[RMDB]
RNA sequence: GGGAACGACUCGAGUAGAGUCGAAAAUAGAAAUUACAACGUUGACAUAGGAGGCAGGUACAAAUUCUAAAUCUCAGGCAAUACUUCAGUUACCUUUAAUAAUAACUCUUCUAAAGUUACAAUGAAGUGAUAUGUUAGAUUUCGAUCUAACAUAUCAAAAAGAAACAACAACAACAAC
Reactivity to 2A3 in 0.01 (KOAc 150mM, MgCl2 10mM, bicine 150mM(pH8.5), 24C), signal-to-noise 3, nucleotides 027 to 126: u070a010g080a030a080a020u140u100a040c050a160a040c120g050u030u070g020a020c010a070u100a040g000g060a020g010g030c020a000g030g010u060a040c030a030a120a030u080u030c010u040a010a080a120u050c040u010c030a010g020g000c000a010a090u020a080c000u030u040c010a050g010u060u030a060c000c000u060u100u070a120a080u120a100a030u030a060a060c020u030c030u210u070c020u100a100a090a030g020u020u000a030c030a080a090u100g020a050a000g070
Reactivity to DMS in 0.01 (KOAc 150mM, MgCl2 10mM, bicine 150mM(pH8.5), 24C), signal-to-noise 5, nucleotides 027 to 126: u000a080g010a070a060a090u000u000a120c090a090a080c130g010u000u000g010a100c070a080u010a100g010g020a090g000g010c060a030g000g020u010a060c090a060a060a070u000u000c050u010a040a090a090u000c020u000c040a050g010g010c040a040a030u000a050c020u010u000c030a040g010u000u000a060c080c010u000u000u000a060a050u010a100a140u000a030a030c030u000c050u000u000c080u010a080a110a050g000u000u000a040c150a070a120u010g000a040a040g010
Chemical mapping of a 177-nucleotide RNA with 2A3 and DMS.
For 2A3, 3,394 sequencing reads were counted.
The DMS profile rests on 5,069 reads.
The reactions ran in a buffer of 150 mM KOAc, 10 mM MgCl2 and 150 mM bicine (pH 8.5), at 24 C.
Reactivities are given for positions 27 through 126.
In probing experiments dimethyl sulfate is read out at A N1 and C N3, which are open when not base-paired.
DMS adducts were read by reverse transcription with MarathonRT.
The data come from the RNA Mapping Database (RMDB), library OK2TST.